RNA sequence: GGGAACGACUCGAGUAGAGUCGAAAAGCCGGGCCGUGGCCAGAGCAGAUACGUAGGCCCAUGAAAUUGAUGAACUGAGAGUUGCUCGCAGUCCUCAGCGCACCAUCUGGAAUUCUAGUCUGAGGUUCAGUUGACUAGGGUUCGCCCUAGUCAACUGAAAAGAAACAACAACAACAAC
Reactivity to 2A3 in 0.01 (KOAc 150mM, MgCl2 10mM, bicine 150mM(pH8.5), 24C), signal-to-noise 1, nucleotides 027 to 126: g040c000c050g020g070g000c000c060g000u140g110g000c000c010a000g030a060g000c040a000g040a020u090a190c130g010u000a050g000g050c060c000c000a020u110g040a070a080a020u060u080g000a080u040g000a030a050c020u030g000a000g010a000g130u050u110g010c020u000c000g020c000a000g060u030c000c010u020c020a060g000c000g000c060a180c000c000a130u120c000u090g110g040a000a030u230u070c060u110a060g080u000c030u000g010a000g110g000u020u000

Chemical mapping of a 177-nucleotide RNA with 2A3. The reactions ran in a buffer of 150 mM KOAc, 10 mM MgCl2 and 150 mM bicine (pH 8.5), at 24 C. 2A3 adducts were read by reverse transcription with SuperScript II with manganese. The data come from the RNA Mapping Database (RMDB), library RFM100.